[RMDB]
RNA sequence: GGGAACGACUCGAGUAGAGUCGAAAAAUGAAGAUACCACAAAACAGAAACCCUAUUUUCUUAUUUCAAAUGCCUCUUCAACUCAAACAGCUGUUUUUGAAAUGAAUGUCAUACUCAGUGAAUAUGCAAUAAUAAAGUCUUUCGAGACUUUAUUAUUAAAAGAAACAACAACAACAAC
Reactivity to DMS in 0.01 (KOAc 150mM, MgCl2 10mM, bicine 150mM(pH8.5), 24C), signal-to-noise 1, nucleotides 027 to 126: a090u000g020a090a100g000a120u000a040c050c060a070c070a050a040a060a120c080a080g000a130a110a090c040c050c020u010a050u000u000u000u020c050u020u000a080u020u040u020c060a040a040a070u000g020c020c070u010c050u000u010c030a030a050c050u000c060a050a020a090c190a110g020c020u020g020u000u020u010u000u010g000a020a040a050u000g000a080a030u000g010u000c020a030u000a050c030u000c020a070g030u000g010a070a080u000a030u000g020c060